The record gives the reactivity of an RNA of 177 nucleotides to 2A3 and DMS. 2A3 adducts were read by reverse transcription with SuperScript II with manganese.
[RMDB]
RNA sequence: GGGAACGACUCGAGUAGAGUCGAAAACGAAACCUUUGGGUUUACAGAGUUACUUACCCCAGAAGUUGCCCUGGACGCUCAACAACACAUCAAACAGUUUUAUCUGGCUUGCAUUGAACCCACAAGCUAUACGAGGGGCAUUCGUGCCCCUCGUAUAAAAAGAAACAACAACAACAAC
Reactivity to 2A3 in 0.01 (KOAc 150mM, MgCl2 10mM, bicine 150mM(pH8.5), 24C), signal-to-noise 2, nucleotides 027 to 126: c030g050a010a000a010c010c000u030u040u100g070g010g000u000u020u120a070c020a000g200a040g050u080u010a180c000u070u150a100c030c000c000c000a130g040a120a030g070u060u020g030c010c000c000u000g060g000a050c040g000c080u090c070a000a020c030a020a010c010a080c020a100u100c050a020a070a110c020a050g030u000u050u200u030a270u130c090u040g040g000c020u010u030g000c010a030u000u200g030a030a030c000c010c000a030c000a020a000g030c010
Reactivity to DMS in 0.01 (KOAc 150mM, MgCl2 10mM, bicine 150mM(pH8.5), 24C), signal-to-noise 1, nucleotides 027 to 126: c170g020a060a090a060c030c010u000u010u120g000g030g000u070u000u000a160c050a230g010a090g090u010u050a090c030u000u000a130c090c040c020c060a120g000a090a080g010u000u000g000c030c000c000u010g060g000a020c100g020c020u010c020a030a070c210a110a030c130a050c070a060u040c070a200a100a030c110a060g000u010u010u000u000a050u030c090u000g000g000c010u000u000g000c130a040u030u020g060a090a150c000c000c010a140c230a040a040g000c100